This 177-nucleotide RNA was probed chemically with 2A3 and DMS.
For DMS, 1,219 sequencing reads were counted.
[RMDB]
RNA sequence: GGGAACGACUCGAGUAGAGUCGAAAAAGGCUUGUCGCGUCGACUGUGAAAACCCGCGGCUCAACUGCGGGCUUGCAGCCGAUACGAGCAGGCUGUAGGAACAUAAUUGAGAAUAAACAGCGGACGCAAUAUUAAAUAUAUUCGUAUAUUUAAUAUUAAAAGAAACAACAACAACAAC
Reactivity to 2A3 in 0.01 (KOAc 150mM, MgCl2 10mM, bicine 150mM(pH8.5), 24C), signal-to-noise 1, nucleotides 027 to 126: a000g050g010c000u020u040g020u020c020g030c030g010u000c010g020a080c000u000g000u000g060a050a010a060a060c000c000c020g000c000g000g000c100u070c200a090a160c090u070g000c000g000g000g000c010u000u060g000c010a000g000c000c000g010a000u020a060c040g030a050g020c010a010g000g000c010u020g010u010a030g010g080a150a000c070a080u220a180a120u190u140g070a090g050a110a110u160a170a100a030c010a050g070c050g010g030a010c020g020c050
Reactivity to DMS in 0.01 (KOAc 150mM, MgCl2 10mM, bicine 150mM(pH8.5), 24C), signal-to-noise 1, nucleotides 027 to 126: a100g000g030c030u000u000g000u020c020g020c040g020u010c000g010a060c000u000g000u030g000a060a060a140a180c000c000c000g030c000g000g000c120u070c190a050a270c030u020g020c010g020g000g040c060u000u000g040c000a000g000c020c000g020a030u030a090c040g000a100g030c020a040g010g000c000u010g010u020a010g000g000a090a090c110a090u000a060a090u020u010g000a090g010a110a090u050a050a090a040c050a040g020c050g010g030a080c060g020c060